[RMDB]
RNA sequence: GGGAACGACUCGAGUAGAGUCGAAAAUCGAUAUGGUCGAGGUAGCUCAGGCGAUCAAAUACGUAUCCGAGAAUCAGAAGGAUCUCAAACCGCAAUAUCGGAUGCAACCUCCUCGCACAUCCGUACACUUACCCAAUGGCGAACCUGGCAAAUUUACAUAUGUUAGAUCUUUCGAGAUCUAACAUAUAAAAGAAACAACAACAACAAC
Reactivity to 2A3 in 0.01 (KOAc 150mM, MgCl2 10mM, bicine 150mM(pH8.5), 24C), signal-to-noise 9, nucleotides 027 to 156: u100c020g020a040u030a030u150g070g010u040c020g010a020g020g030u090a040g020c040u050c150a030g050g020c050g030a070u070c080a020a110a020u200a060c070g000u020a010u010c010c010g010a010g030a060a060u110c050a050g120a220a070g110g040a090u030c040u040c130a140a200a090c030c010g050c090a040a040u050a030u120c010g000g000a000u000g010c000a030a130c010c010u030c000c010u010c020g020c010a030c000a040u010c030c010g000u050a020c060a010c060u060u090a080c000c000c030a020a080u080g030g000c030g020a030a040c020c020u010g040g000c020a040a070a090u150u220u110a060c060
Reactivity to DMS in 0.01 (KOAc 150mM, MgCl2 10mM, bicine 150mM(pH8.5), 24C), signal-to-noise 4, nucleotides 027 to 156: u000c040g000a100u000a040u010g010g020u000c020g020a080g030g010u000a080g000c030u010c050a090g030g010c040g000a090u000c040a060a090a100u000a090c110g030u000a070u000c010c020g020a070g030a070a120u010c090a160g000a170a160g010g000a140u010c060u000c120a060a080a100c030c020g000c090a110a130u000a140u000c010g050g000a040u000g000c020a110a050c020c010u000c010c030u000c030g010c100a040c040a040u000c020c020g000u010a080c090a050c050u000u000a120c030c010c040a070a110u000g000g030c030g010a030a040c040c030u010g010g000c040a030a040a090u000u000u000a060c110